Chemical mapping of a 207-nucleotide RNA with DMS and 2A3. For DMS the reverse transcriptase was MarathonRT.

RNA sequence: GGGAACGACUCGAGUAGAGUCGAAAAGAGUAGACAUAGUUACAAAACAAACAGACUAUUCUCUAUUACCUGGUGUGAAUACAGGCAGUUCUAUUGUGACGCCUCUUACCAGAAGAGGAGCUACUAGACGACCUAAACGCCCAUCUACACCUCCACGCUAAAGCUUCGUAUUCGUACGAAGCUUUAGAAAAGAAACAACAACAACAAC
Reactivity to DMS in 0.01 (KOAc 150mM, MgCl2 10mM, bicine 150mM(pH8.5), 24C), signal-to-noise 2, nucleotides 027 to 156: g000a060g060u010a030g010a050c000a030u040a030g010u000u000a300c080a100a130a200a240c190a190a050a130c140a120g020a050c030u000a000u010u010c050u000c010u000a050u000u020a100c050c050u000g040g060u010g020u020g000a080a130u000a090c170a030g010g030c020a070g000u010u010c020u000a120u010u020g040u120g000a010c030g020c020c000u000c020u010u000a140c190c230a210g020a060a050g030a050g000g010a040g000c000u000a010c030u000a050g010a020c020g010a070c030c020u020a080a060a100c030g010c010c060c020a180u000c010u000a070c060a020c050c010u000c030c030a100c250g020
Reactivity to 2A3 in 0.01 (KOAc 150mM, MgCl2 10mM, bicine 150mM(pH8.5), 24C), signal-to-noise 3, nucleotides 027 to 156: g010a000g020u060a010g010a020c010a040u070a020g010u020u100a070c060a100a190a110a020c070a030a090a050c040a070g050a010c010u020a030u090u040c030u000c010u030a050u070u070a080c000c000u030g010g020u040g010u020g110a110a030u150a090c060a070g020g010c030a040g020u080u030c020u040a070u120u110g030u000g070a040c050g050c010c000u000c020u030u030a150c060c050a110g040a170a000g000a030g000g010a010g030c010u020a020c000u020a020g000a030c030g030a090c000c050u090a070a060a030c060g000c010c020c000a020u040c050u090a020c020a020c040c040u080c040c110a030c030g090

Overview
For 2A3, 1,596 sequencing reads were counted. Source: RMDB library OK3TST, as collected in RNAgym. Conditions: 150 mM KOAc, 10 mM MgCl2 and 150 mM bicine (pH 8.5), 24 C. 2A3 adducts were read by reverse transcription with SuperScript II with manganese.